[RMDB]
RNA sequence: GGGAACGACUCGAGUAGAGUCGAAAAGAUAUGGACAGAGAAGAGAACUACAUGUGAGGCGGAUCGGAAACGAUCCGCUCAUGCUCUUCGACGAAGUCCUAAGUCAAAACCCCCGUUCGCGGGGGAACACAAUACAGUCGUUCGCGACUGUAUUGUGAAAAGAAACAACAACAACAAC
Reactivity to 2A3 in 0.01 (KOAc 150mM, MgCl2 10mM, bicine 150mM(pH8.5), 24C), signal-to-noise 2, nucleotides 027 to 126: g010a010u040a010u070g000g000a000c010a010g270a020g000a190a000g020a000g010a190a060c090u200a080c290a150u300g050u050g100a030g100g170c010g020g020a000u000c000g030g000a020a000a010c000g000a000u000c000c000g010c000u000c010a000u010g010c000u000c000u000u010c010g010a070c040g060a180a070g010u000c000c000u010a070a010g030u030c000a030a100a180a300c000c010c010c010c000g000u020u030c250g030c000g070g000g000g000g010a020a000
Reactivity to DMS in 0.01 (KOAc 150mM, MgCl2 10mM, bicine 150mM(pH8.5), 24C), signal-to-noise 2, nucleotides 027 to 126: g000a020u000a210u010g000g000a010c000a070g030a210g020a010a030g000a020g020a140a140c170u030a150c190a050u010g010u000g000a050g010g020c000g000g020a010u000c000g000g010a050a040a080c000g010a000u000c000c000g000c000u000c000a010u000g000c000u000c000u000u000c000g010a100c300g020a110a070g000u000c000c000u020a020a150g000u010c000a100a050a120a180c010c000c000c020c000g030u000u010c220g030c000g030g000g000g010g010a000a040

Background
The data come from the RNA Mapping Database (RMDB), library TTRDEL. Chemical mapping of a 177-nucleotide RNA with 2A3 and DMS. High DMS reactivity at an A or C suggests that its Watson-Crick edge is free. DMS adducts were read by reverse transcription with MarathonRT. The reactions ran in a buffer of 150 mM KOAc, 10 mM MgCl2 and 150 mM bicine (pH 8.5), at 24 C. Values cover nucleotides 27 to 126.